Source: RMDB library ARCHII, as collected in RNAgym. Structure probing data (2A3 and DMS) for a 207-nucleotide construct. For 2A3, 1,197 sequencing reads were counted. High 2A3 reactivity points to a flexible backbone, as in loops and unpaired stretches. Conditions: 150 mM KOAc, 10 mM MgCl2 and 150 mM bicine (pH 8.5), 24 C. 2A3 adducts were read by reverse transcription with SuperScript II with manganese.

RNA sequence: GGGAACGACUCGAGUAGAGUCGAAAAUACGCUAAAGCUGCGUGAGUUAAUCUCCUUUUGGAGCUGGACUGAUUAGAAUUUCUAGCGUUUUAAUCGCUCCAUAACCUUAAGCUAGACGCUUUUAAAAGGUGGUUCGCCUUUUAAACUAAGAAACAAGCAACUAUGGAUUCUUCGGAAUCCAUAGUUGAAAAGAAACAACAACAACAAC
Reactivity to 2A3 in 0.01 (KOAc 150mM, MgCl2 10mM, bicine 150mM(pH8.5), 24C), signal-to-noise 2, nucleotides 027 to 156: u100a000c010g010c030u100a170a040a250g110c160u080g000c020g030u030g040a040g010u090u140a120a140u060c050u070c030c010u140u160u030u290g020g000a020g000c050u030g030g000a030c020u030g010a020u000u010a000g010a010a000u120u060u000c010u000a010g000c000g000u000u000u000u000a010a010u020c000g020c040u000c030c010a110u120a110a100c020c010u130u060a100a010g000c000u000a000g000a010c010g070c010u020u040u020u000a000a010a000a020g020g000u020g030g170u040u060c050g000c000c000u020u020u010u020a000a020a010c000u090a120a030g050a100a140a020c080a070a000g090
Reactivity to DMS in 0.01 (KOAc 150mM, MgCl2 10mM, bicine 150mM(pH8.5), 24C), signal-to-noise 1, nucleotides 027 to 156: u000a090c020g050c040u000a080a150a140g020c080u000g000c030g010u000g010a170g000u010u010a190a160u000c020u000c050c020u000u020u040u010g000g010a020g000c220u010g030g020a070c040u000g010a070u000u000a040g010a010a020u000u010u010c060u000a120g040c130g010u020u000u020u000a020a020u000c000g020c040u000c010c010a090u000a260a170c010c030u000u030a060a030g020c020u010a090g010a110c090g010c040u000u000u000u000a010a000a030a030g030g050u010g030g030u000u000c130g050c000c000u000u000u000u000a020a010a050c050u020a000a160g020a140a080a110c070a090a190g000